[RMDB]
RNA sequence: GGGAACGACUCGAGUAGAGUCGAAAACGAGCCGCAUCUGGCGAUGCACCGUGUCCAUGAAAAUAUCGAGGCUUUCGCGAACAUAGGUUUCCUCGCGGCUUGAAUGCGAGAAAAGCUUGACGGUUGACUCAGCUAGUACUUUCGAGUACUAGCUGAGAAAAGAAACAACAACAACAAC
Reactivity to DMS in 0.01 (KOAc 150mM, MgCl2 10mM, bicine 150mM(pH8.5), 24C), signal-to-noise 3, nucleotides 027 to 126: c040g010a300g020c040c040g010c020a040u000c040u000g010g010c190g010a080u000g020c030a130c000c010g000u010g010u020c020c030a130u020g010a060a090a070a100u000a070u010c050g010a070g000g010c060u000u000u000c050g020c070g000a060a070c100a130u020a060g020g000u000u000u000c030c030u000c030g030c000g020g020c140u020u020g010a100a070u000g000c010g010a040g000a070a040a060a050g000c020u000u000g000a080c060g000g000u000u000g000a170
Reactivity to 2A3 in 0.01 (KOAc 150mM, MgCl2 10mM, bicine 150mM(pH8.5), 24C), signal-to-noise 1, nucleotides 027 to 126: c010g030a030g080c020c070g020c030a090u090c030u190g120g000c110g030a030u030g020c050a000c030c010g030u020g000u030c030c020a070u150g090a060a070a040a060u220a040u050c050g040a030g000g010c000u060u070u080c090g040c020g080a040a000c020a100u200a070g110g000u060u030u000c020c020u000c010g000c000g010g030c000u050u070g110a150a030u100g030c010g000a010g050a030a110a000a010g000c000u040u040g100a080c010g060g010u060u110g000a040
Structure probing data (DMS and 2A3) for a 177-nucleotide construct.
For DMS, 2,550 sequencing reads were counted.
For DMS the reverse transcriptase was MarathonRT.
Values cover nucleotides 27 to 126.